About this RNA
Structure probing data (2A3) for a 177-nucleotide construct. Source: RMDB libraries RFM100 and RFMREP, as collected in RNAgym. Values are in units of 0.01, from 0 to 300, in steps of 10. 2A3 adducts were read by reverse transcription with SuperScript II with manganese. Conditions: 150 mM KOAc, 10 mM MgCl2 and 150 mM bicine (pH 8.5), 24 C.

[RMDB]
RNA sequence: GGGAACGACUCGAGUAGAGUCGAAAACAUGAAUAUUAGUUACAAAUAUUUCAAUGCAGCAUACUUGCAUUGAGCUGCUAAGCACGAAGCAGUAAGUGGUUAUGUAUAUAGCGACUUUAGGAAUUGUACUAGCAGGUGCAUUCGUGCACCUGCUAGUAAAAGAAACAACAACAACAAC
Reactivity to 2A3 in 0.01 (KOAc 150mM, MgCl2 10mM, bicine 150mM(pH8.5), 24C), signal-to-noise 1, nucleotides 027 to 126: c040a090u090g060a130a040u260a280u260u290a070g140u140u150a060c000a020a030a050u030a110u010u010u000c040a050a000u000g000c000a070g000c000a180u020a260c100u060u000g020c000a000u010u010g000a000g000c000u000g000c000u000a010a000g110c020a060c160g030a040a000g050c000a000g010u000a010a000g010u010g090g000u100u060a090u020g220u030a070u050a000u000a300g000c020g030a010c010u000u010u040a050g080g110a150a090u140u120g010u120

Reactivities are given for positions 27 through 126.